Chemical mapping of a 177-nucleotide RNA with 2A3 and DMS. For 2A3 the reverse transcriptase was SuperScript II with manganese. Values are in units of 0.01, from 0 to 300, in steps of 10. It was measured as part of the RMDB libraries RFM100 and RFMREP.
RNA sequence: GGGAACGACUCGAGUAGAGUCGAAAAGAAAGAAAGAUUGGGCACAAUGAGGAGUUAAUUUUGCUAAUGUAUCUCCGAGGCCAGAAGGUCAAUGAUUCUUAUGUCCUUUUCAUUCUGAGUGCCCUAAUCGCAAUUCCUGUUUCGACAGGAAUUGCGAAAAAGAAACAACAACAACAAC
Reactivity to 2A3 in 0.01 (KOAc 150mM, MgCl2 10mM, bicine 150mM(pH8.5), 24C), signal-to-noise 2, nucleotides 027 to 126: g120a010a080a010g130a000a060a000g060a080u020u020g000g000g000c000a000c000a050a000u060g000a000g050g000a000g000u040u050a050a300u000u000u060u150g290c080u170a000a090u200g040u240a060u000c000u000c020c030g000a040g100g000c000c000a000g070a090a000g000g080u000c000a060a060u290g000a050u240u190c000u000u160a040u020g020u000c000c000u000u000u040u030c130a180u000u030c020u130g000a030g090u010g000c000c000c000u000a000a000
Reactivity to DMS in 0.01 (KOAc 150mM, MgCl2 10mM, bicine 150mM(pH8.5), 24C), signal-to-noise 2, nucleotides 027 to 126: g040a110a090a080g010a040a100a050g000a060u010u010g020g020g000c000a070c030a010a060u000g000a150g010g000a040g000u000u020a060a040u000u030u040u080g010c300u040a020a010u000g040u030a000u000c010u000c000c030g000a070g010g030c100c000a070g000a050a030g000g040u000c030a150a180u000g000a050u000u020c020u020u000a210u000g000u000c000c010u020u000u000u000c190a130u000u010c040u000g020a300g020u020g000c040c000c000u000a010a000